[RMDB]
This 177-nucleotide RNA was probed chemically with DMS and 2A3.
It was measured as part of the RMDB library OK2TRN.
The 2A3 profile rests on 1,151 reads.
For DMS, 1,005 sequencing reads were counted.
RNA sequence: GGGAACGACUCGAGUAGAGUCGAAAACGCCGGCGCGCGGCGCGAAGGGUGACGCCGGCGGUGCGAUGGACCGCGUUGUGGCGCAGCUGCUCGUCGAGGUGGACGGCGUCGGCCACACGCGCAGCGACGCCGAAUGACGCUUCGGCGUCAUUCGGCGAAAAGAAACAACAACAACAAC
Reactivity to DMS in 0.01 (KOAc 150mM, MgCl2 10mM, bicine 150mM(pH8.5), 24C), signal-to-noise 1, nucleotides 027 to 126: c050g000c040c020g020g020c030g000c000g010c010g040g000c050g010c090g010a170a180g000g020g020u000g000a140c020g000c000c000g000g010c000g000g020u000g050c080g020a130u000g020g040a130c300c000g050c000g010u020u030g060u020g000g000c000g020c060a150g010c040u000g010c080u000c090g000u010c020g000a150g050g020u000g010g030a110c020g020g010c000g040u000c060g000g000c000c000a020c020a060c050g010c030g020c070a060g000c050g000a190
Reactivity to 2A3 in 0.01 (KOAc 150mM, MgCl2 10mM, bicine 150mM(pH8.5), 24C), signal-to-noise 2, nucleotides 027 to 126: c010g020c000c000g000g000c000g000c010g000c040g210g000c070g000c100g180a140a220g140g050g070u070g020a100c000g000c020c040g000g000c030g020g050u050g000c030g070a090u150g110g110a110c040c050g000c020g130u130u220g030u030g000g010c010g020c100a130g020c030u050g060c050u070c290g020u010c020g020a170g110g280u240g120g010a000c000g000g000c000g000u020c030g020g000c000c000a040c000a030c030g030c000g000c000a020g010c020g080a040